[RMDB]
Chemical mapping of a 207-nucleotide RNA with DMS and 2A3.
It was measured as part of the RMDB library OK3TST.
Conditions: 150 mM KOAc, 10 mM MgCl2 and 150 mM bicine (pH 8.5), 24 C.

RNA sequence: GGGAACGACUCGAGUAGAGUCGAAAAGUGUGGACCGAUGCGACUGGUGCGCAAAAGUUUGUGAUUUCUGGUGUCGGGUUCAGGAAGCGAUCAGGUACGUGCAGUCUUCGGAACUUUUUGUUUAUAUUCGAAUGGCUAAUGGGAAUCACUAAAAACAUACGGUCAAGUUAUUCGUAACUUGACCGUAAAAAGAAACAACAACAACAAC
Reactivity to DMS in 0.01 (KOAc 150mM, MgCl2 10mM, bicine 150mM(pH8.5), 24C), signal-to-noise 1, nucleotides 027 to 156: g010u000g020u000g030g000a120c020c010g010a240u010g010c040g010a160c090u010g000g080u000g040c000g030c100a080a080a150a070g000u010u000u000g030u010g000a070u000u000u000c010u000g000g020u010g020u000c000g020g020g010u000u000c030a110g000g010a050a080g000c060g000a080u000c010a090g020g020u000a030c020g070u000g070c120a130g000u000c030u000u000c020g030g010a050a060c040u000u000u000u010u000g040u000u000u000a060u000a290u030u010c030g010a100a040u020g050g000c000u010a050a110u000g000g010g010a020a030u010c020a030c050u050a060a050a020a030a090c080a170
Reactivity to 2A3 in 0.01 (KOAc 150mM, MgCl2 10mM, bicine 150mM(pH8.5), 24C), signal-to-noise 3, nucleotides 027 to 156: g100u080g020u070g040g010a020c020c000g030a050u050g020c000g030a040c100u130g000g040u110g080c010g020c080a040a010a040a050g070u120u150u130g000u040g040a040u010u020u020c040u050g050g000u020g030u090c010g000g000g050u050u080c020a020g070g040a000a050g030c070g020a010u050c040a020g000g090u050a020c020g070u100g070c020a020g010u000c000u000u000c000g020g060a060a060c000u050u070u010u030u100g030u070u090u020a170u040a070u060u130c020g030a070a060u160g020g030c000u060a100a080u130g010g020g020a000a010u040c010a010c110u120a040a060a170a000a020c030a000